[RMDB]
RNA sequence: GGGAACGACUCGAGUAGAGUCGAAAAGCUGCCUCUGACGUCCUUCUCCCCCGGAAACGGGGCCGAAGGGUGGUAAGGCGAGUCGCCUGGCGCUAGCACGGGUAUGCGUGGGGGUCGACCCUGGCCGGCCUAUAGGAGUCUUCGGACUCCUAUAGGCAAAAGAAACAACAACAACAAC
Reactivity to DMS in 0.01 (KOAc 150mM, MgCl2 10mM, bicine 150mM(pH8.5), 24C), signal-to-noise 1, nucleotides 027 to 126: g010c030u010g000c020c010u000c090u010g030a070c060g000u000c000c020u020u000c000u020c300c010c010c010c000g000g000a060a070a200c000g020g000g000g010c020c060g000a010a020g020g000g030u000g000g050u000a100a030g000g030c010g010a040g010u010c010g010c010c020u010g010g020c080g000c040u000a160g020c060a080c090g000g010g020u010a030u020g010c040g020u000g010g040g010g040g000u010c050g010a100c020c010c010u000g020g010c140c070g030